An RNA of 170 nucleotides, treated with 2A3 and DMS and read out base by base. DMS adducts were read by reverse transcription with MarathonRT. For 2A3, 4,626 sequencing reads were counted. Values cover nucleotides 27 to 129.
RNA sequence: GGGAACGACUCGAGUAGAGUCGAAAACACUUUCACUGCUACCACUGCUGUAGGUAGUUGUAUAAAGAGUGUAGUGCGGCAUCUAGGUGUUACUAAAGGCAUAUUGACAGGCUGUUUUAGUUUUGCCCAAGGCGACGAUUCGUCGUCGCCAAAAGAAACAACAACAACAAC
Reactivity to 2A3 in 0.01 (KOAc 150mM, MgCl2 10mM, bicine 150mM(pH8.5), 24C), signal-to-noise 4, nucleotides 027 to 129: c010a020c010u030u110u120c050a030c040u030g010c020u030a000c000c000a020c070u170g080c090u230g160u100a030g020g000u010a050g000u000u040g060u000a090u060a010a140a000g080a030g000u010g000u030a030g020u030g040c010g010g000c010a040u030c020u010a010g040g000u020g030u050u050a040c020u080a050a020a020g020g000c000a050u070a070u160u190g090a020c010a010g040g000c000u000g030u030u020u010u050a120g010u000u020u080u090g010c000c000c020a030a060
Reactivity to DMS in 0.01 (KOAc 150mM, MgCl2 10mM, bicine 150mM(pH8.5), 24C), signal-to-noise 3, nucleotides 027 to 129: c060a070c050u020u000u030c140a020c070u010g030c030u030a030c010c020a060c040u050g040c170u070g030u030a080g010g020u010a030g000u030u030g040u070a090u070a110a150a100g020a060g110u000g030u030a030g040u030g080c000g030g030c000a060u000c040u040a080g040g100u020g080u040u020a050c030u010a000a000a000g010g040c000a020u020a080u060u050g010a150c070a000g020g010c000u010g050u000u000u000u000a100g040u000u000u000u000g040c060c000c050a000a000